[RMDB]
RNA sequence: GGGAACGACUCGAGUAGAGUCGAAAAGAUAUGGAAACAUAACGCGUAGACUAUCAUUGUCGGAAACGACAAUGACGAAUCUACGAACUACGUUAGUUUCCUAAGUCAAACUCCCGUUCGCGGGAGACUGUAAUUGUUAGUUCGCUAACAAUUACAGAAAAGAAACAACAACAACAAC
Reactivity to 2A3 in 0.01 (KOAc 150mM, MgCl2 10mM, bicine 150mM(pH8.5), 24C), signal-to-noise 7, nucleotides 027 to 126: g030a010u080a030u170g000g030a030a030a000c100a300u040a020a010c010g000c000g050u000a000g000a030c060u040a040u040c000a000u000u000g000u010c010g010g000a070a050a010c010g010a000c000a000a000u020g010a000c020g070a060a300u000c000u010a010c010g010a020a040c060u140a030c040g020u010u020a000g000u000u010u000c000c000u020a150a010g050u020c050a060a060a240c000u010c010c010c000g010u060u080c300g000c020g070g000g010a010g010a070
Reactivity to DMS in 0.01 (KOAc 150mM, MgCl2 10mM, bicine 150mM(pH8.5), 24C), signal-to-noise 8, nucleotides 027 to 126: g000a040u000a300u010g010g000a010a000a010c010a080u010a010a010c010g000c020g000u000a010g010a010c110u000a300u000c000a010u000u000g010u000c000g020g010a130a090a180c000g010a000c010a000a000u000g000a010c120g010a070a090u000c010u000a010c010g000a090a060c150u010a300c010g000u000u000a020g010u000u000u000c000c000u000a030a100g000u000c030a100a140a230c000u000c000c000c000g020u000u010c210g020c020g000g000g000a000g000a070
An RNA of 177 nucleotides, treated with 2A3 and DMS and read out base by base. For 2A3, 29,912 sequencing reads were counted. The RNA was probed in 150 mM KOAc, 10 mM MgCl2 and 150 mM bicine (pH 8.5) at 24 C.